[RMDB]
RNA sequence: GGGAACGACUCGAGUAGAGUCGAAAAGCUUAAGGGUGAAUACCAGUAUUGGUUCGACCUGGAUGUGACUGACCACCACACAGACUAUUUUGCAGAGUUCAUAGUGGUGGUGGUAGUGGCCUUACUGCUAAGUAACCCUCUUCGGAGGGUUACUUAGAAAAGAAACAACAACAACAAC
Reactivity to 2A3 in 0.01 (KOAc 150mM, MgCl2 10mM, bicine 150mM(pH8.5), 24C), signal-to-noise 8, nucleotides 027 to 126: g050c040u200u220a020a020g020g010g000u030g070a100a070u140a200c000c000a080g090u250a280u200u230g020g000u020u040c050g080a060c010c020u010g010g020a040u130g060u060g050a010c000u030g100a030c000c000a010c000c000a000c010a010c000a000g040a030c020u040a150u090u170u140u230g080c110a050g040a010g200u100u150c020a050u100a100g020u020g160g050u010g000g020u010g000g000u010a010g010u020g080g040c000c000u030u160a120c040u070g050
Reactivity to DMS in 0.01 (KOAc 150mM, MgCl2 10mM, bicine 150mM(pH8.5), 24C), signal-to-noise 6, nucleotides 027 to 126: g010c010u000u010a240a140g000g000g010u010g010a100a070u040a060c010c010a050g030u050a090u060u000g010g010u000u010c190g010a040c000c000u010g010g000a150u040g010u000g000a080c050u000g000a050c010c000a010c000c000a000c000a060c120a120g000a040c010u010a050u010u030u050u010g030c250a110g000a040g010u010u010c080a090u040a110g000u020g000g010u000g000g030u000g000g000u000a020g000u000g010g010c030c030u000u030a060c110u010g000
Source: RMDB library OK1LIB, as collected in RNAgym. This 177-nucleotide RNA was probed chemically with 2A3 and DMS. For DMS, 16,351 sequencing reads were counted.